The record gives the reactivity of an RNA of 177 nucleotides to DMS and 2A3. For 2A3, 6,989 sequencing reads were counted. For DMS the reverse transcriptase was MarathonRT. Conditions: 150 mM KOAc, 10 mM MgCl2 and 150 mM bicine (pH 8.5), 24 C.
[RMDB]
RNA sequence: GGGAACGACUCGAGUAGAGUCGAAAAGAUAUGGAUCGUCCUGGAGUACCUGGCUCGGAAACGAGCCAGUACUGUGAAGGGACGAGUCCUAAGUCAAAAUCGUAGACUUGUUCGCAAGUCUACGAAAGACUCCUUUAUGGUUCGCCAUAAAGGAGUCAAAAGAAACAACAACAACAAC
Reactivity to DMS in 0.01 (KOAc 150mM, MgCl2 10mM, bicine 150mM(pH8.5), 24C), signal-to-noise 3, nucleotides 027 to 126: g000a010u000a040u010g010g000a090u010c000g020u000c000c000u000g000g010a020g020u000a020c190c060u000g000g010c000u000c000g020g000a020a010a040c010g020a020g010c000c010a000g010u000a000c010u000g000u010g000a230a170g000g010g000a020c010g000a040g020u010c000c000u000a000a110g000u010c000a100a090a100a160u000c000g010u000a000g000a020c000u000u000g000u000u000c210g010c000a000a010g000u000c000u000a010c000g000a010a030a100
Reactivity to 2A3 in 0.01 (KOAc 150mM, MgCl2 10mM, bicine 150mM(pH8.5), 24C), signal-to-noise 2, nucleotides 027 to 126: g000a000u020a000u070g000g000a000u040c010g020u020c000c010u010g010g030a050g010u030a030c000c120u000g000g000c020u020c000g030g000a000a000a010c010g020a010g010c010c020a000g000u000a000c000u120g300u020g100a010a020g010g000g000a000c000g010a010g000u010c000c000u000a030a000g020u000c010a010a000a050a260u060c000g010u000a000g010a020c000u010u030g020u060u110c180g000c160a010a000g010u000c000u000a000c000g000a000a000a000